The record gives the reactivity of an RNA of 207 nucleotides to DMS and 2A3.

RNA sequence: GGGAACGACUCGAGUAGAGUCGAAAAGGAGCGACAAGUCUUUAGCUUGAGAUAGCUAAAUCACCUCGGUAUGAUUAGGGUGAGACCUAGGAACCGUAGGGGUAUUCUCAAAGGAAGCUUUUGCAGUGAAGGAAGAUACGAUUCGUCGUAUCUUCAACCUGCUACACUAGUUCGCUAGUGUAGCAGGAAAAGAAACAACAACAACAAC
Reactivity to DMS in 0.01 (KOAc 150mM, MgCl2 10mM, bicine 150mM(pH8.5), 24C), signal-to-noise 1, nucleotides 027 to 156: g020g020a100g050c020g040a120c050a060a070g000u000c060u000u010u000a050g000c030u010u000g000a160g000a160u010a040g040c000u000a010a020a050u010c010a030c000c010u000c050g020g000u020a090u000g000a270u000u000a010g000g000g000u000g010a190g040a100c020c000u000a050g060g020a110a100c020c010g010u000a050g000g020g010g000u000a070u010u010c020u010c070a060a110a170g000g010a160a110g010c020u000u000u000u000g020c030a120g000u010g000a030a080g040g000a050a060g000a030u000a000c000g010a040u010u000c300g080u010c000g050u000a020u000c010u000u000c000a020a080
Reactivity to 2A3 in 0.01 (KOAc 150mM, MgCl2 10mM, bicine 150mM(pH8.5), 24C), signal-to-noise 3, nucleotides 027 to 156: g060g010a040g020c020g060a070c050a120a030g050u050c030u020u040u050a020g020c000u000u010g000a010g000a050u100a050g010c020u050a060a050a030u100c060a050c000c010u020c040g030g010u260a210u190g040a090u040u060a020g030g010g000u020g140a070g040a070c010c000u010a030g010g030a030a040c000c010g020u090a030g000g010g000g020u030a070u080u050c030u010c010a060a060a000g070g010a030a040g010c000u040u060u150u150g050c050a040g030u070g210a110a050g120g010a000a000g010a010u000a000c010g000a000u010u100c170g050u000c000g000u080a000u010c000u000u000c000a000a000
Conditions: 150 mM KOAc, 10 mM MgCl2 and 150 mM bicine (pH 8.5), 24 C. It was measured as part of the RMDB library M2RFPK. Reactivities are given for positions 27 through 156.